[RMDB]
RNA sequence: GGGAACGACUCGAGUAGAGUCGAAAAGAGUGCGUCCUCCUCCGGCACGCAUGCCGUUGUCAGGCCCAGGACCCGUCGCAGCGUGUCGCGUACGACCCCUGCCGCCGUGGUGUACGCGGGCCCGCGGCGCAGGAAACCAAUUCGUUGGUUUCCUGCGAAAAGAAACAACAACAACAAC
Reactivity to 2A3 in 0.01 (KOAc 150mM, MgCl2 10mM, bicine 150mM(pH8.5), 24C), signal-to-noise 5, nucleotides 027 to 126: g080a010g030u060g010c010g010u030c010c010u030c000c040u050c060c020g030g010c090a020c030g030c020a050u100g020c010c020g030u060u120g140u120c140a060g000g040c020c010c010a020g010g060a030c000c010c010g010u030c010g010c010a020g000c030g090u050g010u040c010g000c040g070u090a080c050g040a030c000c000c000c010u030g050c070c030g030c020c000g070u150g000g030u040g050u050a070c080g030c090g030g000g000c020c000c000g000c000g010g000
Reactivity to DMS in 0.01 (KOAc 150mM, MgCl2 10mM, bicine 150mM(pH8.5), 24C), signal-to-noise 8, nucleotides 027 to 126: g010a120g020u000g010c030g010u000c040c020u000c060c040u010c080c060g000g010c160a030c090g000c070a070u000g000c010c010g000u000u010g020u000c130a090g020g000c020c010c020a190g000g000a060c010c040c010g000u000c090g010c020a040g020c090g020u010g010u000c010g030c300g000u010a050c060g000a060c010c030c120c020u000g000c080c030g010c060c030g010u000g010g020u000g010u010a060c060g010c090g010g000g010c010c010c030g010c010g010g010